[RMDB]
RNA sequence: GGGAACGACUCGAGUAGAGUCGAAAAUGAGUGCAGACCCUGAGAAAAGCCAAACUUGCUGAUUUUAAGCUUCUUGCUUAGGACCAGGAUUGGGAGCCACACAAUUGGGAGGUUCCAGUGAAUGCAGGCAACAGAGGAUGAAGCAGGGCCAAAAGGAUAAAUAAAUGGACUUCGGUCCAUUUAUUUAAAAAGAAACAACAACAACAAC
Reactivity to 2A3 in 0.01 (KOAc 150mM, MgCl2 10mM, bicine 150mM(pH8.5), 24C), signal-to-noise 2, nucleotides 027 to 156: u040g010a010g070u040g000c040a000g030a090c000c000c010u020g020a010g070a020a180a010a010g000c020c010a000a080a030c040u080u080g010c050u040g010a100u030u090u010u000a030a000g000c010u040u020c050u260u300g010c000u020u000a000g000g000a040c030c010a000g040g030a070u010u100g060g000g030a020g020c000c000a030c000a000c010a020a300u120u130g070g030g020a080g000g070u020u020c010c000a000g020u000g030a070a040u110g020c030a010g010g000c000a040a020c010a010g060a020g060g000a000u070g010a050a020g000c030a010g000g000g040c020c000a000a030a000a060g070g000a060
Reactivity to DMS in 0.01 (KOAc 150mM, MgCl2 10mM, bicine 150mM(pH8.5), 24C), signal-to-noise 2, nucleotides 027 to 156: u010g000a120g030u000g000c050a130g000a100c020c010c010u010g000a150g000a110a060a100a120g020c000c010a050a170a220c060u010u000g040c010u000g010a040u000u000u000u000a030a030g000c000u010u000c250u000u000g020c000u000u000a020g040g030a030c000c000a050g020g020a120u010u030g000g010g010a080g040c020c020a060c080a060c070a090a200u020u010g040g010g000a120g050g000u000u020c020c010a090g020u020g000a050a070u000g020c020a020g030g020c030a040a130c070a080g010a140g000g000a070u000g000a040a120g040c010a040g020g020g030c040c040a020a060a030a040g000g010a250

The data come from the RNA Mapping Database (RMDB), library OK3TST.
Chemical mapping of a 207-nucleotide RNA with 2A3 and DMS.
For DMS, 3,486 sequencing reads were counted.
The reactions ran in a buffer of 150 mM KOAc, 10 mM MgCl2 and 150 mM bicine (pH 8.5), at 24 C.